[RMDB]
Structure probing data (2A3 and DMS) for a 207-nucleotide construct. For DMS the reverse transcriptase was MarathonRT. 2A3 adducts were read by reverse transcription with SuperScript II with manganese. Reactivities are given for positions 27 through 156. Values are in units of 0.01, from 0 to 300, in steps of 10.
RNA sequence: GGGAACGACUCGAGUAGAGUCGAAAAGGGUUUUGCGAUCUGUAAGCAGAUGGCAGGUUCACCCCGUACGGUGCGGAAGUUCGCGCUUCCGUGAAACGCGAAAAUCGGACGGUGGCUGCAAGUCGCAUUGAAGGGAUCGCCUUCGGGCGAUCCCUAAUAAACUGAUUUGAUUCGUCAAAUCAGUUUAAAAAGAAACAACAACAACAAC
Reactivity to 2A3 in 0.01 (KOAc 150mM, MgCl2 10mM, bicine 150mM(pH8.5), 24C), signal-to-noise 1, nucleotides 027 to 156: g060g000g000u030u070u070u120g000c020g040a000u030c010u040g050u150a080a100g090c050a060g030a070u070g070g000c030a000g050g000u080u110c060a090c030c000c000c000g030u010a020c030g030g030u020g000c000g000g010a020a040g010u140u280c020g010c020g000c090u010u000c000c010g000u030g050a190a140a000c060g000c030g040a060a060a010a090u070c010g010g000a020c000g000g010u060g010g000c000u040g020c020a000a030g030u040c000g010c030a030u000u090g040a060a070g060g000g000a000u030c000g000c100c060u060u110c240g020g000g000c000g000a000u000c000c010c000u000a000a000
Reactivity to DMS in 0.01 (KOAc 150mM, MgCl2 10mM, bicine 150mM(pH8.5), 24C), signal-to-noise 2, nucleotides 027 to 156: g010g020g000u010u000u000u000g050c040g000a040u000c010u000g000u000a080a130g030c020a080g010a050u000g040g020c030a060g020g010u010u000c050a120c020c030c010c040g040u000a060c010g000g030u000g030c010g000g000a080a070g010u010u000c270g030c300g010c010u000u000c030c110g020u000g000a030a060a030c060g010c030g010a100a080a070a070u010c080g000g010a020c030g000g000u000g010g030c050u000g020c030a060a100g020u000c010g010c030a140u010u020g010a120a080g020g050g000a070u000c000g000c000c010u000u000c300g040g020g040c030g000a000u010c000c000c000u000a010a030